[RMDB]
RNA sequence: GGGAACGACUCGAGUAGAGUCGAAAAGAUCGGAUUAAAUAGCAUUCUAUGUCAACAAUAUUGCUUCAGGGUAAAAGCAUAAGAGCGUACGAAACAGUGGCAACCUCUGAAGAAUUUUCGUAUUUGCAUUAAAAUGAGCGUUCGCGCUCAUUUUAAUAAAAGAAACAACAACAACAAC
Reactivity to DMS in 0.01 (KOAc 150mM, MgCl2 10mM, bicine 150mM(pH8.5), 24C), signal-to-noise 3, nucleotides 027 to 126: g020a070u010c050g000g000a140u010u030a020a060a070u000a070g030c050a090u000u010c080u010a040u000g000u010c050a060a090c150a050a060u020a070u020u000g020c010u020u000c050a010g000g000g020u000a020a020a070a070g030c070a070u010a030a100g020a090g010c110g000u050a030c110g000a050a060a040c140a050g040u010g000g010c060a020a100c060c030u020c040u000g000a050a020g000a070a050u020u000u000u010c100g000u010a070u030u020u020g010c080
Reactivity to 2A3 in 0.01 (KOAc 150mM, MgCl2 10mM, bicine 150mM(pH8.5), 24C), signal-to-noise 3, nucleotides 027 to 126: g040a020u080c070g050g010a040u100u110a070a050a140u120a060g050c000a030u160u060c030u100a070u080g070u160c040a080a040c010a040a130u150a070u220u170g040c000u000u040c020a000g020g030g000u070a040a080a020a050g050c040a030u070a160a060g050a000g020c060g030u100a020c020g010a050a160a050c020a050g050u050g020g000c000a050a060c020c000u130c000u040g000a040a020g020a050a030u060u000u020u010c020g000u040a110u110u080u070g060c020